[RMDB]
The record gives the reactivity of an RNA of 177 nucleotides to DMS and 2A3. Source: RMDB library M2PK90, as collected in RNAgym. The reactions ran in a buffer of 150 mM KOAc, 10 mM MgCl2 and 150 mM bicine (pH 8.5), at 24 C. For DMS the reverse transcriptase was MarathonRT.
RNA sequence: GGGAACGACUCGAGUAGAGUCGAAAAUAAGAGCAUGUUCGAAUCACGAUAUGAGAGUUCCUGGUGAAUCCCGGGUACAAGGAAAGGUAUUAAUCUCCCACUGCGUUCCCUUGCAGUAGGGAUAUAAGUUAGUGCAUGUAUUCGUACAUGCACUAACAAAAGAAACAACAACAACAAC
Reactivity to DMS in 0.01 (KOAc 150mM, MgCl2 10mM, bicine 150mM(pH8.5), 24C), signal-to-noise 6, nucleotides 027 to 126: u010a080a100g010a080g010c090a040u010g000u000u000c020g000a070a060u010c060a070c040g010a150u010a060u010g010a070g000a300g000u000u010c000c010u000g010g030u000g000a100a090u000c060c020c020g000g010g020u000a040c060a050a050g010g000a040a050a040g010g020u000a070u000u010a070a090u010c100u000c000c000c010a060c030u000g000c000g000u010u000c020c020c010u010u010g010c010a020g020u010a080g020g010g000a020u010a010u000a050a130
Reactivity to 2A3 in 0.01 (KOAc 150mM, MgCl2 10mM, bicine 150mM(pH8.5), 24C), signal-to-noise 2, nucleotides 027 to 126: u130a020a020g060a020g050c030a050u080g070u080u050c020g050a060a060u080c040a020c100g040a050u030a040u280g060a060g000a000g030u020u010c000c000u050g040g020u050g080a060a060u060c020c010c000g000g000g050u050a060c040a030a010g090g030a110a040a010g120g010u080a090u110u120a200a070u030c030u040c060c000c000a000c000u000g000c000g020u040u050c000c000c010u010u060g000c000a000g000u130a130g000g000g000a010u020a010u010a020a000